Chemical mapping of a 177-nucleotide RNA with DMS and 2A3. DMS adducts were read by reverse transcription with MarathonRT. Conditions: 150 mM KOAc, 10 mM MgCl2 and 150 mM bicine (pH 8.5), 24 C. DMS (dimethyl sulfate) methylates the pairing face of unpaired adenines and cytosines.

RNA sequence: GGGAACGACUCGAGUAGAGUCGAAAAAAUACUGGUGUAAGCGUGUAGGGCGUGACCUAGGCAAAUCCGGGUCACAUUCAGCCUGAGACGUGAUGCGUAGCCGAUUGAGGCGAAUUCAGUGAUCCUACAAGAGUUCUCGAUUCGUCGAGAACUCUUGAAAAGAAACAACAACAACAAC
Reactivity to DMS in 0.01 (KOAc 150mM, MgCl2 10mM, bicine 150mM(pH8.5), 24C), signal-to-noise 3, nucleotides 027 to 126: a170a050u010a030c010u020g000g040u030g010u000a060a300g000c010g010u000g000u020a300g000g000g040c000g010u000g000a010c010c000u020a080g030g000c160a100a080a180u040c010c000g010g000g000u000c000a000c000a090u030u020c300a250g000c000c020u010g000a260g000a010c000g000u000g000a070u050g000c000g040u000a300g000c010c000g030a110u020u080g000a230g010g030c000g020a040a040u080u060c010a000g010u030g010a070u000c020c010u010a100
Reactivity to 2A3 in 0.01 (KOAc 150mM, MgCl2 10mM, bicine 150mM(pH8.5), 24C), signal-to-noise 4, nucleotides 027 to 126: a000a000u200a020c010u020g030g000u020g010u010a040a020g000c010g000u000g020u040a020g010g010g000c010g010u010g010a010c020c010u090a300g030g040c230a160a070a040u180c000c000g000g000g010u000c000a000c000a010u200u240c090a020g000c000c000u030g000a040g020a010c000g010u010g010a000u190g000c010g010u020a000g000c000c030g130a180u100u300g090a110g030g000c000g030a000a010u050u060c000a000g010u000g010a050u020c000c000u010a000